[RMDB]
RNA sequence: GGGAACGACUCGAGUAGAGUCGAAAAGAGGAUUCAACGAGCUUCGUAGCAACGAUAGCAACGUAGCUUUUGCUACGACCCGAGCUAUCGAGGGUAGCUACGUCCCCUGCUCGAGGGAAGAAUCCGAGAUACUGGGUCAGUUCGCUGACCCAGUAUCAAAAGAAACAACAACAACAAC
Reactivity to DMS in 0.01 (KOAc 150mM, MgCl2 10mM, bicine 150mM(pH8.5), 24C), signal-to-noise 2, nucleotides 027 to 126: g010a200g010g010a030u020u000c030a130a130c040g010a020g020c010u020u020c020g050u000a010g010c050a120a130c090g000a030u000a000g010c000a080a150c040g000u000a010g000c000u000u010u020u000g030c000u020a030c000g000a070c090c170c210g010a160g020c000u000a000u000c050g000a110g000g020g060u000a140g000c000u000a020c010g020u000c090c000c010c060u000g000c000u000c000g000a150g020g000g020a150a130g000a020a000u000c000c000g030a110
Reactivity to 2A3 in 0.01 (KOAc 150mM, MgCl2 10mM, bicine 150mM(pH8.5), 24C), signal-to-noise 1, nucleotides 027 to 126: g140a010g010g010a030u020u000c050a170a030c030g020a000g000c020u150u100c020g040u000a000g030c030a070a030c040g000a010u020a000g010c000a000a070c000g010u000a010g000c010u180u200u180u300g010c000u000a010c020g080a100c030c050c020g000a040g030c010u020a000u020c000g010a090g010g180g090u160a040g000c020u000a030c010g090u080c030c000c000c040u060g000c000u000c000g010a110g030g100g050a050a190g000a020a000u030c000c060g000a010
The record gives the reactivity of an RNA of 177 nucleotides to DMS and 2A3. Values are in units of 0.01, from 0 to 300, in steps of 10. Conditions: 150 mM KOAc, 10 mM MgCl2 and 150 mM bicine (pH 8.5), 24 C. For 2A3 the reverse transcriptase was SuperScript II with manganese. The data come from the RNA Mapping Database (RMDB), library OK2TRN.